The record gives the reactivity of an RNA of 207 nucleotides to DMS and 2A3.

RNA sequence: GGGAACGACUCGAGUAGAGUCGAAAAAAUGGCACUGCAGAGCUGAUGGGCCAUGUACCUAUCCAAAAUGAGAUCCCACCUUGCACACUGUGCUAAUUUGAGAUUCUCAUGCCUCCUACUUGGAGAGACCGCAUGCCCAGCUUCGGCUGGGCAUGAAUAGUCCACAUAUGUUCGCAUAUGUGGACUAAAAAGAAACAACAACAACAAC
Reactivity to DMS in 0.01 (KOAc 150mM, MgCl2 10mM, bicine 150mM(pH8.5), 24C), signal-to-noise 1, nucleotides 027 to 156: a040a050u010g010g000c000a170c020u010g000c030a160g000a130g050c050u000g000a110u010g020g030g040c020c050a080u010g000u000a080c050c010u000a070u010c030c090a060a010a140a110u000g000a060g000a040u010c000c000c010a060c100c000u010u060g000c030a040c010a180c130u030g000u020g050c030u010a020a050u060u000u000g020a080g000a090u040u000c020u020c010a060u000g030c040c000u010c040c030u000a090c150u030u000g000g000a100g000a150g010a050c060c050g020c010a000u010g010c000c000c000a010g010c000u000u010c300g020g030c000u020g040g000g000c000a020u000g000a020a090
Reactivity to 2A3 in 0.01 (KOAc 150mM, MgCl2 10mM, bicine 150mM(pH8.5), 24C), signal-to-noise 2, nucleotides 027 to 156: a000a000u080g000g000c060a050c100u130g010c060a060g020a090g180c080u140g030a130u100g020g010g080c030c000a060u060g010u050a160c000c000u040a060u130c070c050a090a040a040a040u010g000a010g000a060u040c000c000c000a030c000c030u040u040g000c020a010c000a030c210u300g040u020g020c060u090a020a080u010u030u080g110a110g000a090u250u030c000u030c000a000u030g050c000c010u000c000c000u120a300c090u060u160g000g000a040g000a010g050a070c000c130g030c070a000u000g010c000c000c000a000g000c010u000u000c130g080g010c010u000g000g000g000c000a000u000g000a000a000

For 2A3 the reverse transcriptase was SuperScript II with manganese.